[RMDB]
RNA sequence: GGGAACGACUCGAGUAGAGUCGAAAAGCGAUAGCGGUGAAUUAUUCGUGGUUUUAUCGAUUCGGCAUAGUGGCGAUAACUGAAUGUCGGAUCGGUACUGCGGGUGUUUAAACGCACCGUAAAUAAGUCCUGGUUAUUAUUUCGAUAAUAACCAGGAAAAAGAAACAACAACAACAAC
Reactivity to DMS in 0.01 (KOAc 150mM, MgCl2 10mM, bicine 150mM(pH8.5), 24C), signal-to-noise 6, nucleotides 027 to 126: g010c040g010a050u010a100g020c010g000g000u010g010a040a030u000u010a010u000u000c000g030u000g000g000u010u020u030u030a000u000c000g010a010u000u000c010g010g000c000a010u000a060g010u010g000g020c190g010a150u030a090a090c010u000g010a120a020u000g010u000c000g000g000a000u000c000g010g000u000a000c010u000g000c000g000g000g020u000g000u010u000u010a030a080a120c190g010c010a040c030c000g010u010a040a060a090u030a110a090g010
Reactivity to 2A3 in 0.01 (KOAc 150mM, MgCl2 10mM, bicine 150mM(pH8.5), 24C), signal-to-noise 8, nucleotides 027 to 126: g080c040g100a110u160a050g000c010g000g010u000g020a050a070u160u080a010u030u070c010g000u020g010g040u060u070u070u150a010u010c000g000a000u000u000c000g000g000c000a000u010a070g070u060g080g130c140g170a080u170a230a040c010u050g120a120a060u000g000u000c000g000g000a000u000c000g000g000u000a000c000u000g000c010g000g000g000u030g060u010u120u120a140a150a020c040g010c020a000c000c000g010u040a010a090a040u140a050a010g060

The record gives the reactivity of an RNA of 177 nucleotides to DMS and 2A3. It was measured as part of the RMDB libraries RFM100 and RFMREP. The RNA was probed in 150 mM KOAc, 10 mM MgCl2 and 150 mM bicine (pH 8.5) at 24 C. Reactivities are given for positions 27 through 126.